RNA sequence: GGGAACGACUCGAGUAGAGUCGAAAAAUCCUCAGGUUCAUAAGCGUGAUGAUUGGGUGUUCAUGCUCCAUGCAUGACAUGUGCCUCCUUUGAAACUUGUUACGACCUUGGCACAUUACCCAUCUGAAAAAGACGUUCGCGUUCGCGCGAACGUCAAGCCGAUUAAUAACUUCGGUUAUUAAUCGGCAAAAGAAACAACAACAACAAC
Reactivity to DMS in 0.01 (KOAc 150mM, MgCl2 10mM, bicine 150mM(pH8.5), 24C), signal-to-noise 1, nucleotides 027 to 156: a090u010c030c020u000c040a110g090g000u000u000c040a130u000a120a180g030c150g040u020g020a140u000g000a100u010u000g020g010g000u010g010u000u000c000a000u000g020c020u010c120c140a220u010g000c010a030u000g000a050c300a270u010g010u000g000c010c010u000c050c010u010u020u000g000a120a130a050c040u000u020g010u000u000a150c110g000a070c080c040u000u000g000g030c000a040c010a100u000u000a070c030c010c020a080u000c040u000g000a070a130a070a180a130g030a070c000g020u000u000c000g050c010g010u000u000c300g000c120g060c000g000a020a010c000g040u000c010a020a080
Reactivity to 2A3 in 0.01 (KOAc 150mM, MgCl2 10mM, bicine 150mM(pH8.5), 24C), signal-to-noise 3, nucleotides 027 to 156: a010u050c020c010u070c030a060g040g040u020u060c030a040u100a180a060g060c100g090u120g060a100u060g000a020u090u190g040g000g000u020g050u140u060c010a000u010g000c000u070c190c060a110u300g010c000a000u000g000a000c000a030u010g010u010g000c000c010u030c010c030u100u040u110g120a140a090a030c020u060u100g030u200u190a050c080g030a090c050c060u040u020g000g000c020a010c010a010u020u130a010c000c000c010a030u050c030u040g060a100a080a010a020a010g000a000c000g000u000u010c000g000c030g000u020u060c100g010c000g000c010g130a000a000c000g000u000c000a000a000